[RMDB]
RNA sequence: GGGAACGACUCGAGUAGAGUCGAAAAGCAGUUGACUUCGGUCAACUGCAAAUAAAGCUCAAGACGUGCACAGGGAGGAUCGUCUUGAGCAACCCAAUAAAAAAACAUGUAAGUUCGCUUACAUGAAUCAAACAUUAACCUUCGGGUUAAUGUUUGAAAAAGAAACAACAACAACAAC
Reactivity to DMS in 0.01 (KOAc 150mM, MgCl2 10mM, bicine 150mM(pH8.5), 24C), signal-to-noise 2, nucleotides 027 to 126: g010c000a020g000u000u010g020a010c000u010u020c230g040g010u000c000a000a010c000u000g020c000a000a010a020u000a080a110a120g000c010u010c000a000a000g000a020c010g010u000g000c120a180c140a210g000g000g000a140g000g000a170u000c000g000u010c000u000u000g000a000g010c020a010a020c000c000c000a080a100u050a050a000a050a100a070a090a110c000a000u000g000u000a020a010g000u000u010c230g020c010u000u000a000c000a020u000g000a110a050
Reactivity to 2A3 in 0.01 (KOAc 150mM, MgCl2 10mM, bicine 150mM(pH8.5), 24C), signal-to-noise 4, nucleotides 027 to 126: g010c000a000g000u010u010g000a010c010u040u060c150g090g010u010c000a010a000c000u000g010c010a000a000a000u010a000a000a010g000c000u010c020a000a000g000a000c010g050u080g050c130a060c110a290g100g130g060a110g040g020a050u040c000g000u000c000u000u010g000a000g000c000a000a000c000c000c000a010a010u160a020a080a020a000a000a000a010c000a000u000g010u020a000a020g000u030u120c230g010c140u010u000a000c000a000u000g030a020a080